Notes
Structure probing data (DMS and 2A3) for a 207-nucleotide construct. 2A3 adducts were read by reverse transcription with SuperScript II with manganese. For DMS, 8,450 sequencing reads were counted. It was measured as part of the RMDB library M2RFPK. Values cover nucleotides 27 to 156. The RNA was probed in 150 mM KOAc, 10 mM MgCl2 and 150 mM bicine (pH 8.5) at 24 C.
RNA sequence: GGGAACGACUCGAGUAGAGUCGAAAAAGUGAGUAUGGAUCGUUACGACGAGCCAUACUCACAACGGUUUUCCUAAAUCGUCGUGAGACGGACCUUGGAAAACCUAGUAUUUAAAUAACUAGGUCAAAUUAGCCUAGAUCCUUCGGGAUCUAGGCAACAAUGUAUUGUAGUUCGCUACAAUACAUUGAAAAGAAACAACAACAACAAC
Reactivity to DMS in 0.01 (KOAc 150mM, MgCl2 10mM, bicine 150mM(pH8.5), 24C), signal-to-noise 3, nucleotides 027 to 156: a160g030u000g010a030g010u000a000u000g010g000a010u000c010g000u000u000a160c230g040a130c000g010a010g010c000c010a010u000a000c010u000c000a010c000a020a060c120g000g010u000u000u000u000c020c020u000a020a040a060u000c010g010u000c000g000u000g010a300g010a030c010g010g010a020c080c040u000u000g000g000a040a040a040a020c000c000u000a030g010u010a090u000u000u000a090a120a220u000a090a140c060u000a020g000g040u000c030a090a070a160u010u000a070g010c010c010u010a010g020a000u000c000c000u000u010c300g070g030g010a010u000c000u010a000g000g030c000a000a000
Reactivity to 2A3 in 0.01 (KOAc 150mM, MgCl2 10mM, bicine 150mM(pH8.5), 24C), signal-to-noise 9, nucleotides 027 to 156: a000g000u000g000a000g000u000a000u000g000g010a020u010c020g000u020u050a100c280g020a000c000g000a100g000c000c000a000u000a000c000u000c000a000c000a000a000c000g000g000u000u000u010u000c000c000u010a000a010a010u060c010g010u000c010g020u040g130a120g000a030c000g000g010a000c000c010u010u020g010g000a010a000a000a000c000c000u000a010g020u010a040u050u140u100a120a200a130u120a080a020c090u050a010g000g000u000c010a010a060a150u170u170a050g000c000c000u000a000g000a000u000c000c000u020u110c210g060g000g000a000u000c000u000a000g000g000c000a000a000